[RMDB]
RNA sequence: GGGAACGACUCGAGUAGAGUCGAAAAUCUGGGUACUAGGUUUCGUGAAGGCUGACUCGGUCUACGAAACCUUAUCCAUAGACUACUUGUAGACUAGACCGAGUUAGCCUUUAGUCAUGAGUGGUCACUACAGCUAUGUAUUCGUACAUAGCUGUAGAAAAGAAACAACAACAACAAC
Reactivity to DMS in 0.01 (KOAc 150mM, MgCl2 10mM, bicine 150mM(pH8.5), 24C), signal-to-noise 9, nucleotides 027 to 126: u000c040u000g010g010g010u000a030c100u000a050g010g010u000u000u000c040g010u010g000a020a020g000g010c010u000g010a040c030u000c010g010g000u000c000u010a010c030g000a150a060a050c050c090u000u000a020u000c090c140a100u000a060g000a120c100u000a050c120u000u000g010u000a060g010a260c200u000a010g000a010c000c010g010a030g010u000u000a040g000c010c000u000u000u000a030g000u010c060a040u000g000a060g010u000g010g000u000c060a300
Reactivity to 2A3 in 0.01 (KOAc 150mM, MgCl2 10mM, bicine 150mM(pH8.5), 24C), signal-to-noise 2, nucleotides 027 to 126: u050c020u020g020g020g020u050a050c050u050a040g060g000u000u010u040c050g020u060g040a010a010g000g000c030u020g020a020c000u000c020g010g000u000c010u010a010c010g030a020a000a000c020c000u020u010a000u000c010c000a020u080a010g050a030c020u040a010c010u090u100g040u070a040g000a030c010u000a010g010a010c010c000g000a010g020u020u020a010g000c000c010u000u000u000a010g000u000c010a020u050g020a000g060u050g030g020u020c030a010
Chemical mapping of a 177-nucleotide RNA with DMS and 2A3. Conditions: 150 mM KOAc, 10 mM MgCl2 and 150 mM bicine (pH 8.5), 24 C. Source: RMDB library OK2TRN, as collected in RNAgym. The DMS profile rests on 29,687 reads.